[RMDB]
RNA sequence: GGGAACGACUCGAGUAGAGUCGAAAAAGUCAGAGGGCGCUACCAUGCAAACUAGGGCUGGCUACUCUUGCACAGAAUCACAUCUCGAUAAUUGUCAGUGCAAGAGGGACAAUUAUACCAUUUAAUGAAAACGUUUACCUGUUCGCAGGUAAACGAACUCUCUUGAACCGUUCGCGGUUCAAGAGAGAAAAGAAACAACAACAACAAC
Reactivity to 2A3 in 0.01 (KOAc 150mM, MgCl2 10mM, bicine 150mM(pH8.5), 24C), signal-to-noise 2, nucleotides 027 to 156: a000g000u010c010a000g020a090g060g010g070c060g000c000u070a180c100c090a130u300g000c010a000a110a150c040u020a020g000g050g040c010u000g040g040c030u050a100c030u050c000u000u000g000c000a000c000a010g140a070a020u180c020a060c010a240u080c080u020c120g100a060u060a130a090u090u070g070u070c040a030g000u020g000c030a040a000g000a000g010g000g010a000c010a000a000u090u030a050u040a040c000c020a050u060u120u300a160a110u130g030a020a030a040a040c000g000u000u000u000a000c000c000u000g000u010u070c120g000c080a010g000g000u000a000a000a000c000g000a000a010